[RMDB]
RNA sequence: GGGAACGACUCGAGUAGAGUCGAAAAUAACUAUACUGCAUCUAACUUGUGAUGUCAGCUCAUUUUGAAUAGGGAUGUUACAUGUCACGAGACUGUUGUAAUCAUCUUGGUUCUCAUGUCUCAAGGUCAAAUUAUUCAUCUUCGGAUGAAUAAUUUGAAAAGAAACAACAACAACAAC
Reactivity to 2A3 in 0.01 (KOAc 150mM, MgCl2 10mM, bicine 150mM(pH8.5), 24C), signal-to-noise 6, nucleotides 027 to 126: u080a020a010c030u050a030u110a200c010u020g010c000a020u000c010u060a060a220c090u150u110g050u060g100a020u020g110u140c040a020g020c030u030c060a090u100u160u090u110g080a080a070u050a080g020g010g000a010u010g020u030u030a010c000a030u070g050u110c030a030c160g120a110g050a070c050u060g100u180u050g030u100a050a000u150c020a000u000c000u010u020g030g010u050u010c030u000c020a030u120g050u010c000u010c050a030a020g120g000u000
Reactivity to DMS in 0.01 (KOAc 150mM, MgCl2 10mM, bicine 150mM(pH8.5), 24C), signal-to-noise 3, nucleotides 027 to 126: u010a100a110c100u000a100u000a140c020u000g000c020a000u000c030u020a060a150c180u010u000g020u010g000a030u000g010u010c030a020g020c120u010c150a080u000u000u000u000g000a050a090u010a130g010g000g010a010u000g000u000u010a030c030a050u000g000u000c070a090c190g010a110g010a080c070u000g010u000u010g010u010a050a030u000c030a010u000c050u000u000g020g010u000u000c000u000c060a070u010g010u000c020u010c020a100a130g000g020u010

An RNA of 177 nucleotides, treated with 2A3 and DMS and read out base by base. For DMS the reverse transcriptase was MarathonRT. 2A3 adducts were read by reverse transcription with SuperScript II with manganese. The DMS profile rests on 3,574 reads.